[RMDB]
RNA sequence: GGGAACGACUCGAGUAGAGUCGAAAACAACAGGGAGGUUGGUGGUGGACCAGCCACUCGCCAACCGGGUCAGGUCCGGAAGGAAGCAGCCCUAACGAGCCAGGCACGGGUCGCCGUGCCAGUACAACUCAGAGAUAGACUUCGGUCUAUCUCUGAGAAAAGAAACAACAACAACAAC
Reactivity to DMS in 0.01 (KOAc 150mM, MgCl2 10mM, bicine 150mM(pH8.5), 24C), signal-to-noise 2, nucleotides 027 to 126: c040a050a110c080a090g040g000g030a120g000g000u000u000g030g030u000g000g030u000g020g020a150c220c300a120g010c000c000a030c010u020c040g020c000c010a010a050c000c020g000g020g010u000c010a300g030g030u000c000c000g020g070a080a270g000g000a040a020g000c010a170g000c010c000c000u060a120a130c160g000a150g040c040c040a100g000g020c000a000c020g000g000g030u020c300g010c000c020g010u000g000c000c000a020g000u010a020c130a120a140
Reactivity to 2A3 in 0.01 (KOAc 150mM, MgCl2 10mM, bicine 150mM(pH8.5), 24C), signal-to-noise 1, nucleotides 027 to 126: c010a000a000c030a040g000g120g000a070g060g000u000u020g000g020u020g000g000u000g000g010a110c060c040a030g300c010c020a010c010u030c020g000c010c010a010a010c020c030g000g000g000u010c010a010g010g000u000c000c020g010g130a050a060g020g000a030a020g010c020a000g040c030c000c020u070a060a050c070g020a000g000c040c090a080g000g000c020a010c000g020g060g060u150c070g050c120c000g000u010g000c000c000a010g010u020a040c050a080a010